[RMDB]
RNA sequence: GGGAACGACUCGAGUAGAGUCGAAAAGGGCGACAUCACCACGCUGGUUCCUCCCUGUGCAGAAGGGCCCAGAGUACAGGGGUCCUGCCGAAGCAGUCCUGUUCUCCUUUGAAAUGAAAUAUUGCCAAUGCUAUCCGUGUUUCGACACGGAUAGCAUAAAAGAAACAACAACAACAAC
Reactivity to DMS in 0.01 (KOAc 150mM, MgCl2 10mM, bicine 150mM(pH8.5), 24C), signal-to-noise 1, nucleotides 027 to 126: g020g030g030c050g010a130c090a050u010c060a060c050c020a090c130g030c030u000g000g000u020u000c060c050u000c000c000c000u010g010u000g020c010a110g000a150a050g010g030g000c030c020c010a150g000a180g000u000a030c190a060g000g020g000g040u000c100c010u010g010c000c060g020a060a120g030c000a040g010u010c010c020u020g000u000u020c000u010c030c120u000u010u010g010a090a030a080u010g000a050a090a090u000a080u010u010g020c060c050a060